[RMDB]
RNA sequence: GGGAACGACUCGAGUAGAGUCGAAAAAAUGGCAUCAUUUAGACCAAUGCCGUAUGGUUCGGUUGUGACUUCACGCACACCAUCAACAAUCGUCGUCGCAUUUGCUGGAUCAUAAUCGAGUUGUGACACCGUCAUUGUGUAAGCCGUAUCGGACACCGCCAGAUAUAGUGUUCGCACUAUAUCUGGCAAAAGAAACAACAACAACAAC
Reactivity to DMS in 0.01 (KOAc 150mM, MgCl2 10mM, bicine 150mM(pH8.5), 24C), signal-to-noise 3, nucleotides 027 to 156: a070a060u000g010g020c000a080u000c040a110u020u000u000a170g010a110c020c010a200a040u000g020c030c020g030u000a060u000g020g010u000u010c070g010g020u000u000g080u000g010a100c060u000u000c090a110c080g020c060a090c050a110c000c040a140u000c030a070a060c080a060a090u000c080g000u000c070g010u000c040g020c060a090u000u010u000g040c030u010g020g000a070u000c070a070u000a080a070u000c000g000a200g020u000u000g010u000g000a150c030a060c020c030g000u010c020a140u000u010g040u000g000u000a050a070g010c070c020g020u000a100u000c070g030g000a110c050a070c080c050
Reactivity to 2A3 in 0.01 (KOAc 150mM, MgCl2 10mM, bicine 150mM(pH8.5), 24C), signal-to-noise 7, nucleotides 027 to 156: a000a030u130g000g010c030a080u080c030a040u160u170u290a070g030a050c020c010a030a030u090g020c000c010g010u010a040u060g020g010u020u040c030g000g000u060u020g020u020g040a120c060u040u060c150a040c130g030c000a020c010a020c070c010a070u150c040a030a140c020a040a090u100c070g110u040c020g020u020c020g020c100a080u100u030u200g020c020u010g030g020a020u010c020a040u090a130a020u050c060g020a020g050u060u010g020u060g030a010c040a020c040c030g070u080c060a040u010u100g010u010g010u050a040a060g010c010c020g040u060a080u160c050g020g030a040c040a020c070c090
Notes:
Chemical mapping of a 207-nucleotide RNA with DMS and 2A3. Conditions: 150 mM KOAc, 10 mM MgCl2 and 150 mM bicine (pH 8.5), 24 C. For DMS the reverse transcriptase was MarathonRT.